[RMDB]
RNA sequence: GGGAACGACUCGAGUAGAGUCGAAAAGGCCUUCACGGGCUGCACCGCUGGCCGACCCUGAUCUUCUGUGAAGGGUUCGAGUUGGAGCACGCCUGUCGGGACCCGAAAGAUGGUGAACUAUGCCUGAACAUACGUUAAUUUUCGAAUUAACGUAUGUAAAAGAAACAACAACAACAAC
Reactivity to 2A3 in 0.01 (KOAc 150mM, MgCl2 10mM, bicine 150mM(pH8.5), 24C), signal-to-noise 9, nucleotides 027 to 126: g030g030c010c000u040u060c080a010c030g000g000g000c010u010g000c020a040c010c020g000c020u020g040g090c050c090g000a010c000c010c000u010g020a020u020c080u300u080c150u300g060u040g030a010a000g010g000g000u060u140c020g010a020g010u130u300g090g000a030g010c010a010c130g010c000c000u010g010u020c010g010g010g050a090c010c000c010g040a060a060a020g090a050u140g010g030u060g040a090a060c070u090a110u220g030c000c010u020g030a040
Reactivity to DMS in 0.01 (KOAc 150mM, MgCl2 10mM, bicine 150mM(pH8.5), 24C), signal-to-noise 9, nucleotides 027 to 126: g010g010c000c010u000u010c240a040c030g010g000g010c010u000g010c020a070c010c020g010c030u000g000g020c280c060g000a070c010c000c000u000g000a230u000c010u020u030c260u030g010u000g010a300a030g000g000g000u000u010c020g000a050g010u000u020g070g000a070g020c010a020c170g020c000c010u000g010u000c210g010g000g000a110c010c000c020g010a080a080a080g010a090u010g000g010u000g010a110a110c120u020a060u010g000c010c010u000g010a160
Structure probing data (2A3 and DMS) for a 177-nucleotide construct. It was measured as part of the RMDB libraries RFM100 and RFMREP. In probing experiments dimethyl sulfate is read out at A N1 and C N3, which are open when not base-paired. DMS adducts were read by reverse transcription with MarathonRT. The RNA was probed in 150 mM KOAc, 10 mM MgCl2 and 150 mM bicine (pH 8.5) at 24 C.